[RMDB]
RNA sequence: GGGAACGACUCGAGUAGAGUCGAAAACGGUUACGCCUUCUUUACCGUUAUCAAGGAAGGUACCCGGCCAUGCUAAGGGAAGCAUUAUUCCUUAGGCGCAUGUCGCCGCCAGCAUGGUGUGAGGGGAAAAAGUAUGCUGGGUUCGCCCAGCAUACAAGCUUCUUCUCAGGUUCGCCUGAGAAGAAGCAAAAGAAACAACAACAACAAC
Reactivity to 2A3 in 0.01 (KOAc 150mM, MgCl2 10mM, bicine 150mM(pH8.5), 24C), signal-to-noise 2, nucleotides 027 to 156: c030g000g030u030u040a000c060g000c000c000u000u060c000u000u000u030a030c040c010g260u200u050a020u080c050a000a000g020g000a000a000g050g000u100a120c030c000c020g020g000c010c000a000u000g000c010u000a040a080g070g000g020a000a000g000c030a230u180u130a110u120u100c000c020u000u090a040g000g020c000g040c060a160u190g100u300c040g010c060c000g020c020c020a000g000c000a000u000g000g060u020g090u090g080a150g040g040g010g100a000a140a000a020a000g000u000a000u050g000c000u000g020g010g010u040u020c050g090c020c000c000a000g000c000a000u000a000c000a000a020

This 207-nucleotide RNA was probed chemically with 2A3. Source: RMDB library M2RFPK, as collected in RNAgym. Conditions: 150 mM KOAc, 10 mM MgCl2 and 150 mM bicine (pH 8.5), 24 C. 2A3 is a SHAPE reagent: it acylates the 2'-hydroxyl of flexible nucleotides of all four kinds.